[RMDB]
RNA sequence: GGGAACGACUCGAGUAGAGUCGAAAAGAUAUGGACCUUCCGUGCGGCCAUCGAUCUGUAAUCGGAAACGAUUACAGGGAGGCUACACGGAGAGGUCCUAAGUCAAAGGUCGCGUUCGCGCGACCAAUCCAAGGGUAUACUUCGGUAUACCCUUGGAAAAAGAAACAACAACAACAAC
Reactivity to DMS in 0.01 (KOAc 150mM, MgCl2 10mM, bicine 150mM(pH8.5), 24C), signal-to-noise 3, nucleotides 027 to 126: g000a050u030a300u020g010g000a000c000c000u010u010c000c010g040u010g020c030g040g010c000c010a300u000c170g010a030u010c010u000g000u000a010a010u010c000g000g030a120a140a240c000g020a010u010u000a000c000a010g010g000g000a020g040g000c000u010a080c000a020c000g020g000a020g010a020g000g000u000c000c000u000a000a060g010u010c050a090a120a100g020g000u000c000g010c000g020u000u020c300g030c020g020c000g020a010c010c000a030a020
Reactivity to 2A3 in 0.01 (KOAc 150mM, MgCl2 10mM, bicine 150mM(pH8.5), 24C), signal-to-noise 1, nucleotides 027 to 126: g020a020u090a070u210g000g010a000c010c000u000u050c010c000g000u000g010c060g050g000c000c010a250u300c060g040a070u040c000u000g000u000a000a000u000c000g000g000a110a040a050c010g000a000u000u000a000c000a010g000g030g010a000g000g000c000u000a010c000a010c000g000g040a000g010a000g000g000u030c010c000u000a020a000g030u020c030a020a040a160g030g010u000c030g000c020g030u050u120c270g030c000g000c000g220a000c040c000a000a010